[RMDB]
RNA sequence: GGGAACGACUCGAGUAGAGUCGAAAAGAAAAAGAGCACGAGAGACUAAUGUCUCGAGUAGUGGAUACGAAGGCCUAAGUAUCGACUACGAGAUAUCGAAGGCCUAAGAUAUCGAGUGCUCGAAAAAGGGAUAAUUAUGCUUCGGCAUAAUUAUCCCAAAAGAAACAACAACAACAAC
Reactivity to 2A3 in 0.01 (KOAc 150mM, MgCl2 10mM, bicine 150mM(pH8.5), 24C), signal-to-noise 1, nucleotides 027 to 126: g160a000a080a020a000a000g010a000g000c000a000c020g040a010g000a000g010a000c050u240a180a140u270g000u000c000u000c000g010a000g000u000a000g030u000g090g000a000u000a000c010g080a130a000g130g080c000c000u020a040a000g000u000a030u000c010g140a020c040u020a000c040g000a010g000a000u000a000u000c040g020a040a050g080g030c000c000u000a010a010g000a000u000a000u000c020g020a010g000u000g000c000u000c000g000a020a000a000a000a000
Reactivity to DMS in 0.01 (KOAc 150mM, MgCl2 10mM, bicine 150mM(pH8.5), 24C), signal-to-noise 2, nucleotides 027 to 126: g000a120a020a050a150a200g020a000g000c000a020c000g000a300g000a000g000a000c000u040a110a180u060g000u000c000u000c010g000a060g020u000a020g010u010g020g000a000u000a000c000g010a170a080g000g000c050c000u050a170a180g030u000a000u000c000g010a030c080u020a020c070g000a130g010a000u010a000u010c010g000a170a020g000g000c050c040u000a040a110g040a080u000a000u000c040g000a120g000u000g000c000u000c000g000a000a030a080a100a060